[RMDB]
An RNA of 177 nucleotides, treated with DMS and read out base by base. Conditions: 150 mM KOAc, 10 mM MgCl2 and 150 mM bicine (pH 8.5), 24 C. It was measured as part of the RMDB library OK2TST. The DMS profile rests on 1,177 reads. DMS adducts were read by reverse transcription with MarathonRT. Values are in units of 0.01, from 0 to 300, in steps of 10.

RNA sequence: GGGAACGACUCGAGUAGAGUCGAAAAGGAUGUUUGCGAAUGGUUGUCUAAGCUGUACAAACGGCAGAUUAAAUCGAAUAACACUUCAUCAAUCGGCAAACAGUCUGUUAGCGUAGUCAACAUAGAGCCACUGUCGACAUUUCGAUGUCGACAGUGGAAAAGAAACAACAACAACAAC
Reactivity to DMS in 0.01 (KOAc 150mM, MgCl2 10mM, bicine 150mM(pH8.5), 24C), signal-to-noise 2, nucleotides 027 to 126: g010g020a070u000g010u000u000u000g000c060g010a120a130u010g010g030u000u000g000u000c030u000a040a160g060c020u000g020u040a080c300a030a100a060c030g030g030c000a010g000a070u000u020a060a040a040u000c180g010a070a040u000a120a100c250a070c240u000u000c040a060u030c090a020a050u000c010g000g010c000a000a020a020c040a060g010u000c030u000g000u000u020a040g000c260g020u000a010g010u000c070a000a050c000a080u000a200g000a140g020